RNA sequence: GGGAACGACUCGAGUAGAGUCGAAAAGAUAUGGAACAACGAUGCUCGAUAAGAUACCAUCGGAAACGAUGGCUAUCUUUUGACGAGCUAAGUUGUUCCUAAGUCAAAAGCUCUCUUCGGAGAGCAAUCUUAUUUUUAACUUCGGUUAAAAAUAAGAAAAAGAAACAACAACAACAAC
Reactivity to DMS in 0.01 (KOAc 150mM, MgCl2 10mM, bicine 150mM(pH8.5), 24C), signal-to-noise 5, nucleotides 027 to 126: g010a050u000a300u000g010g010a020a010c010a000a000c000g000a300u010g000c000u000c000g020a150u000a020a010g010a020u000a050c020c000a000u000c000g010g000a150a080a150c000g000a000u000g000g020c300u010a000u000c000u000u000u000u000g020a280c100g000a010g010c000u010a100a170g000u000u000g000u000u000c000c010u000a000a100g010u000c050a130a070a100a170g010c000u000c000u000c000u000u020c170g030g010a010g020a010g020c010a020a010
Reactivity to 2A3 in 0.01 (KOAc 150mM, MgCl2 10mM, bicine 150mM(pH8.5), 24C), signal-to-noise 2, nucleotides 027 to 126: g030a000u090a030u170g000g000a000a010c000a010a000c020g000a030u300g000c010u010c020g070a080u020a130a000g000a010u010a010c000c000a020u000c030g030g000a060a050a050c010g000a000u010g000g000c060u010a000u020c000u000u060u020u080g110a060c010g000a000g010c000u010a000a010g010u000u000g010u000u000c000c000u010a000a000g000u020c000a000a020a040a120g010c000u010c000u000c000u040u130c300g110g000a000g000a000g000c000a000a000